Chemical mapping of a 207-nucleotide RNA with 2A3 and DMS. The 2A3 profile rests on 674 reads. For DMS, 1,375 sequencing reads were counted.

[RMDB]
RNA sequence: GGGAACGACUCGAGUAGAGUCGAAAACGUGCCUUCAUGCUAAGGGUUUGAUAUCUGCUAAAACCCGGUGCAUUCAUCAAUGGAGGUUAAGCCAAAGGGAUGUCCCGACCGGAGGCCGACAAUCCAGAUAGCUCAAGAAUGUUCGCAUUCUUGAGAAGUACGAAGGGACUUUCGAGUCCCUUCGUACAAAAGAAACAACAACAACAAC
Reactivity to 2A3 in 0.01 (KOAc 150mM, MgCl2 10mM, bicine 150mM(pH8.5), 24C), signal-to-noise 1, nucleotides 027 to 156: c070g120u060g050c000c010u010u000c010a000u060g000c000u090a080a010g000g000g030u010u000u000g050a100u250a170u200c140u060g100c040u100a010a010a010a010c000c000c030g010g000u080g000c010a040u090u280c030a060u040c080a170a140u120g000g000a000g040g030u090u170a060a010g000c000c000a000a000a000g050g000g030a060u050g030u110c020c000c030g000a000c000c000g000g000a030g000g000c000c010g000a000c040a040a040u020c030c000a080g050a230u070a020g020c000u000c000a010a040g010a000a000u010g000u080u020c050g000c050a000u000u000c000u000u000g000a000g000a010a000
Reactivity to DMS in 0.01 (KOAc 150mM, MgCl2 10mM, bicine 150mM(pH8.5), 24C), signal-to-noise 1, nucleotides 027 to 156: c120g000u000g010c000c000u010u000c020a120u000g000c100u020a300a130g010g000g020u000u010u000g000a180u000a080u040c090u020g000c090u000a120a080a000a010c020c000c000g000g100u030g050c050a220u040u010c120a030u000c180a110a110u000g000g000a000g010g010u000u000a050a090g020c030c010a000a300a300g000g000g000a090u000g020u000c000c000c000g000a300c030c020g000g010a300g000g010c020c000g050a100c110a020a100u010c050c040a120g000a150u000a150g000c000u000c010a030a040g040a040a020u000g000u000u000c140g000c050a030u000u000c000u030u010g000a020g000a000a090